Structure probing data (DMS and 2A3) for a 177-nucleotide construct.
For DMS, 14,592 sequencing reads were counted.
The data come from the RNA Mapping Database (RMDB), library OK2TST.
For DMS the reverse transcriptase was MarathonRT.
For 2A3, 18,611 sequencing reads were counted.
[RMDB]
RNA sequence: GGGAACGACUCGAGUAGAGUCGAAAACUGCAAGGCAGCGAGGAGGCGGAGUGGACACGGGACAGCAUUGCGCAUCUCGUACGCGGUAAACUAGGUGUAUGCAAUGCCCGCAAGGGCAUACCUCGUGGAUGCAUAUACCAUUCGUGGUAUAUGCAUCAAAAGAAACAACAACAACAAC
Reactivity to DMS in 0.01 (KOAc 150mM, MgCl2 10mM, bicine 150mM(pH8.5), 24C), signal-to-noise 9, nucleotides 027 to 126: c050u000g010c080a100a120g010g010c070a080g010c050g010a090g000g000a130g000g020c060g010g000a110g020u000g000g010a120c080a060c060g010g010g000a090c100a110g000c070a100u000u000g030c070g000c020a110u000c030u000c080g010u010a110c120g020c050g000g000u000a050a060a050c060u010a030g010g010u010g010u000a080u010g010c070a090a030u000g010c000c020c020g000c280a070a130g000g000g010c030a040u000a040c050c020u000c070g010u000g010
Reactivity to 2A3 in 0.01 (KOAc 150mM, MgCl2 10mM, bicine 150mM(pH8.5), 24C), signal-to-noise 1, nucleotides 027 to 126: c020u050g010c040a060a080g080g010c010a010g020c030g040a030g030g010a030g010g040c040g010g020a040g020u070g030g010a020c030a030c090g020g020g030a030c040a040g030c010a040u030u150g020c020g010c020a030u010c020u010c030g020u040a040c080g020c060g080g070u130a100a090a020c020u020a030g040g000u010g010u030a030u080g020c040a050a010u030g000c020c010c010g020c040a050a080g030g000g000c000a010u040a040c000c020u050c020g050u070g130